[RMDB]
RNA sequence: GGGAACGACUCGAGUAGAGUCGAAAAGAUAUGGAGCCAGAUAGCGCAUACUCCCUUCGGAAACGAACCAGUAUGAACUACGCUACUGGCUCCUAAGUCAAAACUGAACACGUUCGCGUGUUCAGAACUUAGAUUCCCAGUUCGCUGGGAAUCUAAGAAAAGAAACAACAACAACAAC
Reactivity to 2A3 in 0.01 (KOAc 150mM, MgCl2 10mM, bicine 150mM(pH8.5), 24C), signal-to-noise 2, nucleotides 027 to 126: g020a010u010a000u060g000g010a000g010c010c000a010g150a190u020a010g010c080g000c020a010u000a020c020u080c070c030c020u060u010c000g020g020a020a020a020c000g000a020a020c060c030a030g010u000a020u000g060a170a220c250u160a060c300g000c010u010a010c010u010g000g000c000u010c000c000u000a000a010g030u000c000a000a010a040a100c030u000g010a010a000c000a000c000g010u090u150c300g030c010g150u000g020u030u000c000a000g010a000a010
Reactivity to DMS in 0.01 (KOAc 150mM, MgCl2 10mM, bicine 150mM(pH8.5), 24C), signal-to-noise 2, nucleotides 027 to 126: g000a030u000a170u000g010g000a000g010c000c010a010g000a130u000a000g020c010g020c020a010u000a000c010u000c110c090c180u000u000c000g000g010a030a030a090c010g000a010a050c230c110a020g020u000a000u000g010a120a090c160u030a300c020g000c000u000a000c000u000g010g020c010u000c000c000u000a000a010g010u000c010a060a060a180a160c010u000g000a010a010c000a010c000g000u000u010c210g030c040g030u000g000u000u000c000a000g000a070a070
The data come from the RNA Mapping Database (RMDB), library TTRDEL. An RNA of 177 nucleotides, treated with 2A3 and DMS and read out base by base. Values cover nucleotides 27 to 126. The 2A3 profile rests on 3,145 reads. The RNA was probed in 150 mM KOAc, 10 mM MgCl2 and 150 mM bicine (pH 8.5) at 24 C. For DMS, 1,402 sequencing reads were counted.